The data come from the RNA Mapping Database (RMDB), libraries RFM100 and RFMREP. The record gives the reactivity of an RNA of 177 nucleotides to DMS and 2A3. 2A3 adducts were read by reverse transcription with SuperScript II with manganese. The reactions ran in a buffer of 150 mM KOAc, 10 mM MgCl2 and 150 mM bicine (pH 8.5), at 24 C.
RNA sequence: GGGAACGACUCGAGUAGAGUCGAAAAAUUCAGAGGCGAAAGCCGGGCCUAGCGAACCUCAGAGUCCUCCUUGAUGGGGGCCUGAGAUGACAGAAAAACUACCUCGGGGAUAACUGGGUGGUCGCAGGUCCUAAAUCUAUUUCGAUAGAUUUAGGACAAAAGAAACAACAACAACAAC
Reactivity to DMS in 0.01 (KOAc 150mM, MgCl2 10mM, bicine 150mM(pH8.5), 24C), signal-to-noise 7, nucleotides 027 to 126: a100u030u010c060a110g010a100g000g000c020g010a100a110a130g010c010c000g000g010g000c030c020u000a090g020c030g010a100a080c110c000u000c000a000g000a110g000u020c000c000u000c000c010u020u040g010a130u030g010g000g000g010g000c020c000u010g000a010g000a040u010g000a110c120a140g000a060a070a080a120a080c050u010a070c060c010u010c090g010g000g000g000a100u030a080a110c050u000g000g000g010u010g010g010u000c020g020c070a100g000
Reactivity to 2A3 in 0.01 (KOAc 150mM, MgCl2 10mM, bicine 150mM(pH8.5), 24C), signal-to-noise 8, nucleotides 027 to 126: a000u130u100c060a040g030a050g120g000c030g040a140a030a020g010c000c000g000g010g000c000c010u020a030g010c010g050a030a050c000c000u020c000a010g040a040g070u100c000c000u020c010c010u130u190g120a260u250g040g000g000g000g000c000c000u000g000a000g000a010u040g020a010c030a030g170a040a120a010a020a010c010u030a030c010c020u070c040g020g000g010g050a120u080a140a060c020u030g010g000g030u020g020g030u030c020g010c050a010g000